RNA sequence: GGGAACGACUCGAGUAGAGUCGAAAAGAUAUGGAUCCGUGAGAAAAUUCUUUUGACGCUGGGUCGGAAACGACCCUGCGAUAAGAAUCGGAUCCUAAGUCAAAAGAAGUGUGUUCGCACACUUCAACCAAGGAUGUUACUUCGGUAACAUCCUUGGAAAAGAAACAACAACAACAAC
Reactivity to DMS in 0.01 (KOAc 150mM, MgCl2 10mM, bicine 150mM(pH8.5), 24C), signal-to-noise 1, nucleotides 027 to 126: g000a010u010a110u030g010g000a030u000c010c000g030u000g000a250g010a100a120a170a120u020u010c030u010u010u010u000g010a270c060g000c000u000g000g020g050u000c010g010g010a020a020a120c000g000a000c010c000c010u010g000c000g030a070u000a040a020g010a050a080u000c000g010g000a010u000c000c000u000a010a090g000u020c020a050a090a090a130g000a000a000g000u000g000u000g010u000u010c280g020c000a000c010a020c000u000u010c000a050a170
Reactivity to 2A3 in 0.01 (KOAc 150mM, MgCl2 10mM, bicine 150mM(pH8.5), 24C), signal-to-noise 1, nucleotides 027 to 126: g020a000u040a000u080g000g010a000u000c000c000g040u150g120a300g230a050a260a030a060u110u050c030u040u210u110u160g070a030c000g000c010u040g030g010g010u000c010g000g000a040a000a000c020g000a010c000c000c000u000g000c000g000a000u100a010a060g030a020a040u030c020g000g000a000u000c010c000u000a000a000g000u000c030a030a080a170a180g020a000a020g010u020g020u010g030u070u170c240g000c100a000c000a000c000u000u000c010a020a000
This 177-nucleotide RNA was probed chemically with DMS and 2A3. The reactions ran in a buffer of 150 mM KOAc, 10 mM MgCl2 and 150 mM bicine (pH 8.5), at 24 C. For DMS, 1,102 sequencing reads were counted. The 2A3 profile rests on 1,912 reads. DMS adducts were read by reverse transcription with MarathonRT. Values cover nucleotides 27 to 126. High DMS reactivity at an A or C suggests that its Watson-Crick edge is free.